Conditions: 150 mM KOAc, 10 mM MgCl2 and 150 mM bicine (pH 8.5), 24 C. This 177-nucleotide RNA was probed chemically with DMS and 2A3. For DMS, 2,849 sequencing reads were counted. The data come from the RNA Mapping Database (RMDB), library OK2TST.

[RMDB]
RNA sequence: GGGAACGACUCGAGUAGAGUCGAAAAGAGGAUCAAAACGGAAAGGUCGAUGAUCGCAGGUUUCAGAGUACUCCCGAGGAGCGACUUUCAAUCGUGGGCGGCAAACGAGCACCGCAGUUCUAUAUGCCUUUCUCUUUGGUUUCGACCAAAGAGAAAGAAAAGAAACAACAACAACAAC
Reactivity to DMS in 0.01 (KOAc 150mM, MgCl2 10mM, bicine 150mM(pH8.5), 24C), signal-to-noise 3, nucleotides 027 to 126: g010a090g020g000a030u000c050a060a060a080a110c080g000g010a060a070a080g020g020u010c060g000a100u010g000a080u000c040g020c080a110g000g020u010u010u000c070a090g000a110g000u000a060c060u000c030c030c060g020a100g010g000a100g010c030g000a040c070u000u000u000c110a040a110u000c060g010u000g000g000g020c030g020g010c080a030a090a090c120g000a100g010c090a090c030c030g020c070a070g000u000u000c040u000a090u000a060u010g020c120
Reactivity to 2A3 in 0.01 (KOAc 150mM, MgCl2 10mM, bicine 150mM(pH8.5), 24C), signal-to-noise 2, nucleotides 027 to 126: g020a020g020g020a040u040c040a020a080a000a020c060g080g010a080a040a070g090g030u050c060g050a070u060g050a050u050c040g040c090a020g000g060u010u070u080c080a080g040a020g130u050a040c010u010c040c010c000g020a060g010g020a020g020c030g010a040c000u040u140u050c080a070a040u080c060g000u050g020g040g030c010g030g000c030a040a110a060c090g030a010g030c040a020c070c020g000c020a000g000u050u000c040u070a090u000a020u280g020c000

For 2A3, 1,881 sequencing reads were counted.